[RMDB]
RNA sequence: GGGAACGACUCGAGUAGAGUCGAAAACUCCUAUAGUUCGCUAUAGGAGAAAAUAAAAAGCACGAAAAACAUCUGGGCCUAACGUGCAGGGCAAAUAGAAAAAAAUCCAUUGCUUCGGCAAUGGAAAGUUCCUAUAUAGGUUCGCCUAUAUAGGAACAAAAGAAACAACAACAACAAC
Reactivity to 2A3 in 0.01 (KOAc 150mM, MgCl2 10mM, bicine 150mM(pH8.5), 24C), signal-to-noise 2, nucleotides 027 to 126: c000u000c000c000u010a020u000a000g020u030u040c150g000c070u000a000u000a000g020g000a000g010a070a150a010a000u050a000a040a000a040a010g010c010a010c070g220a290a030a030a050a010c040a070u110c110u180g000g150g000c010c010u030a110a040c040g000u010g000c010a030g020g000g000c070a060a130a030u290a080g120a070a070a010a000a000a000a040u000c000c000a000u010u010g000c010u030u020c240g070g000c000a000a000u020g070g000a000a000a000
Reactivity to DMS in 0.01 (KOAc 150mM, MgCl2 10mM, bicine 150mM(pH8.5), 24C), signal-to-noise 1, nucleotides 027 to 126: c000u020c000c000u000a020u000a000g010u010u000c150g020c000u000a000u000a000g000g010a010g000a020a040a020a070u000a060a040a180a190a060g000c030a010c000g010a170a080a070a070a060c160a120u000c160u040g000g010g020c020c010u010a020a110c020g000u000g000c000a300g000g000g030c010a060a110a100u010a160g030a000a000a040a040a120a100a120u000c000c000a000u000u000g010c000u000u010c300g040g000c000a000a000u000g000g000a030a020a070

This 177-nucleotide RNA was probed chemically with 2A3 and DMS. It was measured as part of the RMDB library M2PK50. Conditions: 150 mM KOAc, 10 mM MgCl2 and 150 mM bicine (pH 8.5), 24 C.